[RMDB]
RNA sequence: GGGAACGACUCGAGUAGAGUCGAAAAGAUAUGGACUAUGACAUGCCACGCAAUCGGAAACGAUUGAGUGGUGGCAACAGCAUACAUGUCCUAAGUCAAAAGUUCAGAAGCUUCGGCUUCUGAACAACCUAUUGCACUAGUUCGCUAGUGCAAUAGGAAAAGAAACAACAACAACAAC
Reactivity to DMS in 0.01 (KOAc 150mM, MgCl2 10mM, bicine 150mM(pH8.5), 24C), signal-to-noise 6, nucleotides 027 to 126: g000a050u000a300u000g000g000a020c020u000a040u000g000a100c100a140u010g010c000c000a000c000g000c000a000a000u000c000g010g000a110a080a170c000g010a020u000u000g010a030g020u010g020g020u000g010g010c050a030a080c180a170g000c040a040u000a080c200a070u000g010u000c000c030u010a060a120g010u000c040a070a100a100a100g010u000u000c000a000g000a020a020g010c000u000u020c260g040g000c000u000u000c010u000g000a010a000c000a040a050
Reactivity to 2A3 in 0.01 (KOAc 150mM, MgCl2 10mM, bicine 150mM(pH8.5), 24C), signal-to-noise 5, nucleotides 027 to 126: g030a010u080a040u190g020g000a010c040u050a030u040g030a100c050a140u170g030c000c000a000c010g030c000a000a000u010c000g020g030a070a070a060c030g010a000u000u020g020a030g140u260g070g030u030g020g010c010a020a060c030a050g040c010a020u070a120c060a120u210g010u000c000c000u030a130a020g010u010c040a040a060a060a170g000u000u000c000a010g000a010a000g000c010u090u210c300g160g000c000u000u000c030u000g000a000a000c000a000a000